RNA sequence: GGGAACGACUCGAGUAGAGUCGAAAAAUUAGCCAACAGACUAGAUCAACUGCGUUAAGUAGAAAAGAUCAGAUGAGCAAUGAAGAAAAGAUAUUCGAAGCAGUUACAAUGAGUCUAUCAACUAUAGGUUCAACGUUGACGUCUGCGGGUAUGGCGGGACCCCCUUAUCAUUCGUGAUAAGGGGGUCAAAAGAAACAACAACAACAAC
Reactivity to 2A3 in 0.01 (KOAc 150mM, MgCl2 10mM, bicine 150mM(pH8.5), 24C), signal-to-noise 2, nucleotides 027 to 156: a000u090u060a040g000c000c000a020a030c010a020g070a060c030u050a010g020a130u130c060a030a020c040u020g010c020g100u220u170a170a050g000u060a020g080a040a200a020a030g080a030u050c020a010g070a160u110g010a060g100c070a060a110u140g020a030a130g060a070a110a010a010g050a020u060a070u050u100c020g030a030a010g030c000a000g010u030u010a030c020a050a190u040g000a010g040u030c000u010a000u060c040a020a110c040u130a000u020a050g000g010u010u020c010a010a030c040g000u020u020g020a040c040g000u030c000u010g030c080g040g020g000u090a110u070g060g000c000g000g040
Reactivity to DMS in 0.01 (KOAc 150mM, MgCl2 10mM, bicine 150mM(pH8.5), 24C), signal-to-noise 1, nucleotides 027 to 156: a140u060u000a030g000c000c030a190a140c050a010g020a140c010u010a260g020a080u000c020a080a270c000u000g000c020g020u000u000a080a090g000u010a030g000a070a080a170a140g000a100u000c050a090g000a090u000g050a300g000c070a090a070u000g000a090a060g000a050a060a160a120g000a210u000a010u000u000c020g010a030a050g030c050a020g000u000u000a130c030a160a230u050g000a060g000u000c000u010a030u030c070a180a080c240u000a050u000a030g010g000u000u010c010a070a040c230g000u060u010g060a110c230g000u000c020u000g020c060g000g020g000u000a050u010g050g020c070g030g010